[RMDB]
An RNA of 207 nucleotides, treated with 2A3 and read out base by base. The reactions ran in a buffer of 150 mM KOAc, 10 mM MgCl2 and 150 mM bicine (pH 8.5), at 24 C. The 2A3 profile rests on 430 reads.

RNA sequence: GGGAACGACUCGAGUAGAGUCGAAAAGAUUAAGUGGGAGCGUCGCCCUCUCGGUGCAUCGGAUAUUAAUUAGCCAGUGCGUGGCAAUACGCAUAUUGAUGUCUACUUUGGCGUAGACUCUGCCAAUUUAAGGAUUGAUGGGCAAUCCAGCCCUAGACCGUAAUAGCGGGUUCGCCCGCUAUUACGGAAAAGAAACAACAACAACAAC
Reactivity to 2A3 in 0.01 (KOAc 150mM, MgCl2 10mM, bicine 150mM(pH8.5), 24C), signal-to-noise 1, nucleotides 027 to 156: g030a020u190u240a020a100g020u110g030g010g000a000g000c030g000u040c000g080c000c000c000u030c020u070c040g070g050u040g000c010a040u050c090g080g000a000u040a020u070u130a110a060u260u150a030g050c030c020a000g080u000g030c020g000u000g060g000c050a000a100u270a070c080g030c010a010u050a150u010u120g030a060u070g000u000c040u070a040c010u090u060u180g090g000c070g000u030a060g080a050c000u010c030u030g090c010c000a130a130u040u150u100a130a040g020g020a050u020u020g100a080u150g030g010g000c000a000a050u080c040c040a010g000c000c000c000u000a080g050a040